[RMDB]
RNA sequence: GGGAACGACUCGAGUAGAGUCGAAAAGAUGAGAACAUACUGUUCAGUUGGGCAAUCAGGUGACACUCCAACUCUUGCAGGAGGUCACGAGCAAGAUAAAGAGGACGGCCUGACUUAACAAAAGAAACGUACUGAUGGAUUUCGAUCCAUCAGUACGAAAAGAAACAACAACAACAAC
Reactivity to 2A3 in 0.01 (KOAc 150mM, MgCl2 10mM, bicine 150mM(pH8.5), 24C), signal-to-noise 6, nucleotides 027 to 126: g090a090u250g050a030g070a100a010c070a080u170a100c020u020g000u000u010c010a000g000u000u010g010g010g010c050a040a080u080c040a090g090g060u010g010a020c130a100c190u000c010c000a090a110c050u060c050u150u220g050c060a090g020g030a010g030g000u050c010a000c020g030a040g010c030a090a000g020a090u150a190a080a040g110a050g100g010a020c050g050g000c000c000u000g000a000c000u010u000a000a000c010a010a110a020a010g120a050a050a000
Reactivity to DMS in 0.01 (KOAc 150mM, MgCl2 10mM, bicine 150mM(pH8.5), 24C), signal-to-noise 4, nucleotides 027 to 126: g010a100u010g000a090g010a100a030c060a120u050a080c150u020g000u000u010c050a070g030u010u000g000g000g010c120a130a100u010c080a160g000g000u000g000a090c090a170c030u000c000c040a110a130c270u020c040u000u090g010c070a230g000g000a080g000g010u020c020a040c070g000a130g070c160a030a060g010a040u020a080a110a100g020a090g000g000a060c300g020g010c010c000u030g020a020c060u000u010a020a030c050a010a040a100a020g010a050a060a120